The record gives the reactivity of an RNA of 177 nucleotides to 2A3 and DMS. The data come from the RNA Mapping Database (RMDB), library OK2TST. For 2A3, 1,191 sequencing reads were counted. The RNA was probed in 150 mM KOAc, 10 mM MgCl2 and 150 mM bicine (pH 8.5) at 24 C.
RNA sequence: GGGAACGACUCGAGUAGAGUCGAAAAUCUAGACGGUAGAUGCAAACAAUAGAUGUCCAAACUCAUCAGACGAGUAGUUACGGUCCUCGCGCUAACUAGUAUGGCGAGUUCAUUUGCCAGCGGGAAGCUUGGCGCAUACAUUCGUGUAUGCGCCAAGAAAAGAAACAACAACAACAAC
Reactivity to 2A3 in 0.01 (KOAc 150mM, MgCl2 10mM, bicine 150mM(pH8.5), 24C), signal-to-noise 1, nucleotides 027 to 126: u070c030u030a080g000a070c050g010g060u040a070g010a110u080g060c060a070a080a050c000a010a110u040a110g100a080u050g050u060c040c040a050a000a070c060u030c010a060u020c010a040g050a170c020g020a040g130u080a000g030u080u100a060c060g000g060u000c010c040u050c040g000c020g000c000u020a050a000c000u010a080g070u000a150u090g080g000c000g000a030g000u000u070c030a040u080u040u110g030c010c000a020g010c020g020g020g020a010a020g020
Reactivity to DMS in 0.01 (KOAc 150mM, MgCl2 10mM, bicine 150mM(pH8.5), 24C), signal-to-noise 2, nucleotides 027 to 126: u000c000u010a000g010a150c110g010g030u010a030g010a060u030g010c210a080a060a080c070a100a110u000a030g000a050u020g000u010c070c040a030a070a100c050u000c010a080u000c050a060g010a060c050g000a050g020u000a040g000u000u000a070c050g020g000u020c050c020u010c060g030c080g020c040u000a050a070c090u000a070g010u020a060u000g000g010c040g010a030g010u000u010c150a040u000u000u000g020c020c010a080g000c050g000g000g000a140a080g010